Structure probing data (2A3 and DMS) for a 207-nucleotide construct. For 2A3, 3,089 sequencing reads were counted. It was measured as part of the RMDB library OK3TST.

RNA sequence: GGGAACGACUCGAGUAGAGUCGAAAAGUGUACGCGUACACUGUGACUAGCUGCGCGCAUAUACACAGCCAUGGUUACGACAUAUCAUAGUCGACUGGUACCGCGCGUAUAAUCAGUGUCGACACGCAUCACAUGCAGCGCUAUGGCGUAUUGUGCGAUAUUUACCACCGUUCGCGGUGGUAAAUAUAAAAGAAACAACAACAACAAC
Reactivity to 2A3 in 0.01 (KOAc 150mM, MgCl2 10mM, bicine 150mM(pH8.5), 24C), signal-to-noise 5, nucleotides 027 to 156: g020u020g020u040a060c100g010c010g070u070a000c030a000c010u010g020u040g070a090c140u120a080g070c080u040g010c020g000c000g010c050a020u130a000u070a200c170a000c070a090g040c040c000a080u180g060g040u120u170a070c050g020a020c070a030u170a090u190c080a100u110a170g020u020c010g010a100c020u010g030g020u060a070c020c060g000c010g000c020g010u020a030u100a090a060u060c000a000g010u000g050u060c040g040a030c020a000c050g010c000a020u120c030a050c010a040u140g040c040a060g010c000g000c010u110a110u270g090g000c000g030u050a060u090u120g030u040g040c060g020
Reactivity to DMS in 0.01 (KOAc 150mM, MgCl2 10mM, bicine 150mM(pH8.5), 24C), signal-to-noise 2, nucleotides 027 to 156: g010u000g030u010a020c000g000c030g000u010a020c010a030c010u000g010u010g020a290c140u000a080g000c120u000g020c000g020c040g020c100a140u000a110u010a050c040a100c060a090g000c000c010a110u010g000g030u000u000a120c030g000a160c300a200u000a060u000c050a130u010a110g010u000c020g010a060c040u000g020g010u000a040c070c160g010c040g030c000g010u000a060u010a080a140u000c000a050g020u000g010u010c030g010a080c000a040c030g010c060a060u000c030a030c020a160u000g000c040a140g010c030g050c060u000a100u050g030g020c030g030u000a070u010u000g000u000g000c000g000